[RMDB]
RNA sequence: GGGAACGACUCGAGUAGAGUCGAAAAUGUGGGCUUGCUGCUUUGCAGUGCUGGCGACCUAUUCCCUUUGACGAUCCCUAGGUGGAGAUGGGGCAUGAGGAUCCUCCAGGGGAAUAGCUCACCACCAGAACGUAGACUCAUUCGUGAGUCUACGUUCAAAAGAAACAACAACAACAAC
Reactivity to DMS in 0.01 (KOAc 150mM, MgCl2 10mM, bicine 150mM(pH8.5), 24C), signal-to-noise 2, nucleotides 027 to 126: u000g020u000g010g000g020c080u010u000g020c030u000g000c020u000u030u000g020c010a000g000u000g010c090u020g000g040c190g000a070c120c030u000a000u000u010c000c020c010u000u000u030g030a050c300g010a050u000c000c030c010u000a130g000g030u010g000g000a090g020a040u000g000g000g010g000c090a080u020g000a100g000g030a070u000c020c100u000c020c040a060g000g000g000g020a010a030u000a020g000c220u070c040a030c030c060a040c070c090a110
Reactivity to 2A3 in 0.01 (KOAc 150mM, MgCl2 10mM, bicine 150mM(pH8.5), 24C), signal-to-noise 5, nucleotides 027 to 126: u160g020u080g010g040g010c040u050u090g000c010u030g000c010u120u070u300g000c010a010g020u020g070c040u040g030g000c030g020a040c000c020u000a000u000u000c010c000c000u000u000u000g010a000c010g000a000u020c000c010c020u040a110g060g120u080g070g150a250g050a110u190g050g020g010g040c020a020u090g030a180g070g000a000u010c000c010u000c010c010a000g020g000g000g000a010a000u000a010g000c010u040c040a040c020c000a020c010c010a030
The record gives the reactivity of an RNA of 177 nucleotides to DMS and 2A3. DMS adducts were read by reverse transcription with MarathonRT. Source: RMDB libraries RFM100 and RFMREP, as collected in RNAgym. Conditions: 150 mM KOAc, 10 mM MgCl2 and 150 mM bicine (pH 8.5), 24 C.